[RMDB]
Structure probing data (2A3 and DMS) for a 207-nucleotide construct.
Conditions: 150 mM KOAc, 10 mM MgCl2 and 150 mM bicine (pH 8.5), 24 C.
RNA sequence: GGGAACGACUCGAGUAGAGUCGAAAAAAAGGGGCUAUGGGAUAGGUCGAGUUAGUAGCCCCACGUGGGUGCAUUUGUGGCUUCCACUGGGCCUUCACCAACCACUGAGAACCAGGCUCUUCACUACGGCUUUCAUGGGGCCAUCUGAAUUGGCAUAGAAAAUCAGUAUAUUCGUAUACUGAUUUUCAAAAGAAACAACAACAACAAC
Reactivity to 2A3 in 0.01 (KOAc 150mM, MgCl2 10mM, bicine 150mM(pH8.5), 24C), signal-to-noise 2, nucleotides 027 to 156: a000a010a000g040g010g010g000c040u080a130u110g030g000g010a030u030a120g020g040u090c100g020a070g120u030u020a010g000u030a030g000c020c000c020c040a010c040g020u040g010g020g030u060g030c010a070u040u200u200g170u190g180g000c000u090u030c010c000a000c010u010g010g000g000c000c000u000u040c070a050c020c010a030a050c000c000a030c030u050g030a010g040a100a020c010c010a020g000g030c000u020c000u080u050c040a040c040u060a030c020g050g020c000u030u130u180c080a060u100g020g000g040g000c020c000a010u010c040u080g050a110a080u100u050g000g000c020a040u040a170
Reactivity to DMS in 0.01 (KOAc 150mM, MgCl2 10mM, bicine 150mM(pH8.5), 24C), signal-to-noise 1, nucleotides 027 to 156: a000a020a020g020g000g030g020c050u000a080u000g050g020g040a160u000a120g020g000u000c050g030a190g010u000u010a150g030u000a100g010c160c010c030c000a000c040g020u000g000g010g000u000g000c070a120u000u000u030g020u010g020g020c000u000u000c000c020a040c080u000g030g030g060c020c000u000u010c040a100c070c020a020a090c000c010a080c050u010g010a170g000a180a080c050c030a070g010g000c010u000c030u010u010c010a060c040u000a080c030g010g010c000u020u010u000c080a080u010g000g020g010g020c000c000a060u010c040u000g020a140a130u000u000g030g000c010a150u000a180
For 2A3, 1,331 sequencing reads were counted. Reactivities are given for positions 27 through 156. 2A3 adducts were read by reverse transcription with SuperScript II with manganese.